Description: An RNA of 177 nucleotides, treated with DMS and 2A3 and read out base by base. DMS adducts were read by reverse transcription with MarathonRT. The reactions ran in a buffer of 150 mM KOAc, 10 mM MgCl2 and 150 mM bicine (pH 8.5), at 24 C. Values cover nucleotides 27 to 126. For 2A3 the reverse transcriptase was SuperScript II with manganese. The 2A3 profile rests on 4,439 reads.
RNA sequence: GGGAACGACUCGAGUAGAGUCGAAAAAAAAGAUAUGGAAUUGUAAGCAACGAAGAACAUUGACUCCCCACCACAAUCGGAAACGAUUGUGAGGUCAAUGGGAGUUGUUGAGAUUCCUAAGUCAAAACAUAUUAUUUAUCUUCGGAUAAAUAAUAUGAAAAGAAACAACAACAACAAC
Reactivity to DMS in 0.01 (KOAc 150mM, MgCl2 10mM, bicine 150mM(pH8.5), 24C), signal-to-noise 5, nucleotides 027 to 126: a080a050a070a120g000a020u010a300u010g000g020a040a020u000u010g010u000a300a110g010c010a000a010c010g010a100a160g000a120a210c010a010u000u000g010a030c010u000c080c030c020c020a300c120c010a010c000a010a010u000c000g010g010a070a060a070c000g020a020u010u000g000u000g000a040g030g010u000c010a000a010u000g000g000g010a070g030u000u000g020u000u000g010a300g000a030u000u000c000c000u000a030a140g000u000c010a060a080a110a170
Reactivity to 2A3 in 0.01 (KOAc 150mM, MgCl2 10mM, bicine 150mM(pH8.5), 24C), signal-to-noise 2, nucleotides 027 to 126: a000a000a000a000g110a050u190a080u140g000g010a010a010u030u060g050u250a040a000g010c010a010a010c030g300a300a070g030a050a000c000a000u000u000g010a000c010u100c020c020c030c010a000c000c000a000c000a000a000u010c010g040g020a090a040a000c000g000a010u010u000g010u000g000a020g000g000u000c000a010a000u000g000g020g000a060g000u000u020g030u010u040g030a120g000a050u000u000c000c000u020a090a030g090u060c030a000a110a050a110